[RMDB]
RNA sequence: GGGAACGACUCGAGUAGAGUCGAAAAGAAACCGCCGUCCCGGCUCGAGCUCGGCGAUGCUGAGCCGGUCAUAGUCGAAUGGCAACACACCGAACAGUCGCAGCCAGGCACGUCCGAUCGGCGCGCCCAUACUAUCCCUCUUCGGAGGGAUAGUAUGAAAAGAAACAACAACAACAAC
Reactivity to DMS in 0.01 (KOAc 150mM, MgCl2 10mM, bicine 150mM(pH8.5), 24C), signal-to-noise 6, nucleotides 027 to 126: g000a070a110a160c200c040g020c040c010g010u000c110c060c010g020g000c080u010c020g010a130g010c010u000c040g020g010c030g010a140u010g010c010u000g000a070g000c030c010g000g010u010c060a100u010a100g010u010c030g000a100a070u010g030g010c020a080a110c150a100c160a050c050c020g000a070a060c090a060g000u000c070g000c130a150g010c020c030a080g000g000c050a060c040g000u010c030c050g000a080u000c070g000g010c000g010c090g010c010c030
Reactivity to 2A3 in 0.01 (KOAc 150mM, MgCl2 10mM, bicine 150mM(pH8.5), 24C), signal-to-noise 5, nucleotides 027 to 126: g030a030a040a000c040c020g010c020c000g040u050c030c030c000g030g020c060u060c020g090a020g010c020u020c070g050g020c090g110a100u170g010c000u010g020a030g020c020c000g000g020u040c040a100u120a080g050u040c040g100a200a140u230g020g010c010a040a020c040a010c020a020c050c030g030a100a040c020a060g090u090c030g010c100a010g010c020c010a010g010g020c030a010c040g020u010c020c030g040a110u080c030g020g000c010g000c010g010c010c010
This 177-nucleotide RNA was probed chemically with DMS and 2A3. For 2A3 the reverse transcriptase was SuperScript II with manganese. DMS adducts were read by reverse transcription with MarathonRT. Conditions: 150 mM KOAc, 10 mM MgCl2 and 150 mM bicine (pH 8.5), 24 C. Source: RMDB library OK2TST, as collected in RNAgym.